Description:
An RNA of 177 nucleotides, treated with 2A3 and DMS and read out base by base.
RNA sequence: GGGAACGACUCGAGUAGAGUCGAAAAGUUGUCAGAGAACAAAGAAAAAUAGACCGCCCCUUGAGCCUGGAAAGUGAUAGGGAGUGGUCUAUUUUAGGUCAAUCUGAGCAAGCCCCUUCGAAGGGCCCAUAUCGACAUAGUUCGCUAUGUCGAUAUGAAAAGAAACAACAACAACAAC
Reactivity to 2A3 in 0.01 (KOAc 150mM, MgCl2 10mM, bicine 150mM(pH8.5), 24C), signal-to-noise 1, nucleotides 027 to 126: g110u120u080g030u030c020a000g030a020g040a090a070c040a090a210a060g170a040a110a040a000a000u000a000g010a010c000c010g000c000c000c000c000u020u010g020a000g030c000c000u090g030g300a300a030a010g040u070g040a010u040a010g000g070g020a090g050u030g000g000u010c010u010a010u010u000u000u010a000g000g000u030c010a000a070u030c000u030g010a010g050c010a010a010g000c000c000c000c020u090u010c050g130a100a060g000g020g000c000c000
Reactivity to DMS in 0.01 (KOAc 150mM, MgCl2 10mM, bicine 150mM(pH8.5), 24C), signal-to-noise 5, nucleotides 027 to 126: g000u010u010g010u000c000a010g010a040g020a110a100c090a080a100a140g000a030a040a010a020a010u000a020g010a010c010c010g020c010c000c000c010u000u000g000a300g010c050c000u000g030g000a100a100a130g010u000g000a180u000a010g000g010g010a070g050u000g000g000u000c000u000a000u000u000u000u000a060g010g010u000c130a060a130u010c010u010g010a070g000c080a050a090g000c020c020c000c050u000u000c140g000a110a110g010g000g010c020c140
Overview: For 2A3, 1,364 sequencing reads were counted.